Chemical mapping of a 307-nucleotide RNA with 2A3 and DMS.

RNA sequence: GGGAACGACUCGAGUAGAGUCGAAAACAACAAACAAAACCUAAAGAUAGGAAAAGGUCCCUUUCGUCCAGUGGUUAGGACAUCGUCUUUUCAUGUCGAAGACACGGGUUCGAUUCCCGUAAGGGAUAGGUACUCAUUCCCGGCCGCUUUCAGUUAGUGUUCAUUGCUGAGUGAUCGCUCGCUAUCUGGCUGGAAAAGGUGGUCCGGAAGCUUCCUCUCUCCCAGCAAGCAAGAUGAGAUCACCACUUCUCUCGGACUUCCAAAGAAGCACUGGAUUCGUCCAGUGCAAAAGAAACAACAACAACAAC
Reactivity to 2A3 in 0.01 (KOAc 150mM, MgCl2 10mM, bicine 150mM(pH8.5), 24C), signal-to-noise 4, nucleotides 027 to 266: c030a000a020c090a080a230a010c080a040a210a070a050c030c020u210a210a150a080g080a120u220a080g040g040a040a080a050a050g080g010u040c000c000c010u000u040u020c000g000u010c010c000a030g010u020g030g120u140u130a010g010g000a000c000a010u020c000g050u010c020u080u280u160u190c210a160u300g040u020c000g010a000a010g010a000c000a000c030g000g000g010u020u030c010g020a030u010u020c010c000c000g000u010a010a030g000g000g000a000u000a030g000g000u030a030c030u030c080a040u060u070c030c000c000g020g040c010c000g020c000u010u080u070c010a000g010u010u040a030g010u040g140u250u230c110a110u160u170g030c100u170g050a020g030u090g060a180u140c140g000c040u020c010g000c000u020a050u080c030u020g030g020c010u020g020g040a090a060a030a030g050g010u020g000g000u040c010c030g020g020a010a030g000c000u050u010c010c020u010c000u010c010u000c010c020c020a010g030c030a040a000g000c020a040a020g010a060u080g010a020g010a070u100c030a020c050c000a020c030u060u020c030u010c000u010c040g040g060a070c000u070u090c030c000a170a040a020g300a040a030
Reactivity to DMS in 0.01 (KOAc 150mM, MgCl2 10mM, bicine 150mM(pH8.5), 24C), signal-to-noise 2, nucleotides 027 to 266: c070a070a080c230a060a180a100c090a040a150a150a070c060c000u000a060a120a090g030a120u020a040g000g000a030a050a070a120g010g010u000c000c020c020u010u010u000c010g000u000c000c020a020g000u000g020g010u000u010a020g000g000a000c000a040u000c020g000u000c020u010u000u030u020c260a030u010g020u010c020g000a030a030g000a020c020a010c050g010g010g030u010u000c010g010a300u010u000c000c000c010g010u000a030a010g000g000g000a020u010a030g000g010u000a130c050u000c080a040u000u000c080c000c120g020g040c020c010g020c030u000u000u000c040a020g010u000u000a030g060u000g000u010u010c170a070u040u010g000c020u020g010a070g050u010g000a070u000c130g000c030u020c040g010c030u010a000u000c000u000g010g000c010u010g000g000a040a080a080a110g000g010u000g000g010u000c000c070g000g010a080a140g010c020u000u000c060c000u010c020u000c060u000c030c030c010a080g000c150a040a040g030c050a100a080g000a040u000g000a060g000a080u000c080a010c020c070a140c040u020u000c010u010c050u000c060g000g020a110c070u000u000c030c030a070a150a170g000a210a120
The reactions ran in a buffer of 150 mM KOAc, 10 mM MgCl2 and 150 mM bicine (pH 8.5), at 24 C.